This 177-nucleotide RNA was probed chemically with DMS and 2A3.

RNA sequence: GGGAACGACUCGAGUAGAGUCGAAAAAGAACAUUGUGCUUGUGGAAAAGGGUUGCUGGAACUUCCAGAGUUAUGCAAUCGUUUAUUGGCAAAUGAAAAUUUACAUUCAUGGGCACAGGCUUAUUACCUGCCCUAUAGAGUUCGCUCUAUAGGGCAGAAAAGAAACAACAACAACAAC
Reactivity to DMS in 0.01 (KOAc 150mM, MgCl2 10mM, bicine 150mM(pH8.5), 24C), signal-to-noise 2, nucleotides 027 to 126: a020g010a090a050c050a090u010u000g060u000g020c010u010u000g060u020g000g010a050a050a070a040g000g030g000u010u000g000c010u010g020g030a080a030c060u000u000c240c280a150g000a050g000u000u000a120u010g010c010a010a020u000c030g000u000u020u010a130u020u000g020g020c080a020a010a010u000g000a040a040a100a050u000u010u000a000c020a230u000u000c000a020u000g000g000g010c010a000c020a030g000g000c040u000u000a120u000u000a100c120
Reactivity to 2A3 in 0.01 (KOAc 150mM, MgCl2 10mM, bicine 150mM(pH8.5), 24C), signal-to-noise 1, nucleotides 027 to 126: a000g100a100a020c030a140u040u040g010u030g000c020u010u000g000u010g030g080a000a000a090a020g110g000g000u020u010g000c030u100g100g140a060a010c000u140u060c170c050a130g070a000g170u070u010a050u100g000c000a000a030u010c000g100u030u080u080a180u090u130g040g050c070a020a020a050u050g050a030a010a050a050u050u080u040a010c020a020u000u040c000a000u000g000g000g030c020a010c020a010g010g000c060u080u060a050u100u030a150c000
The DMS profile rests on 1,331 reads.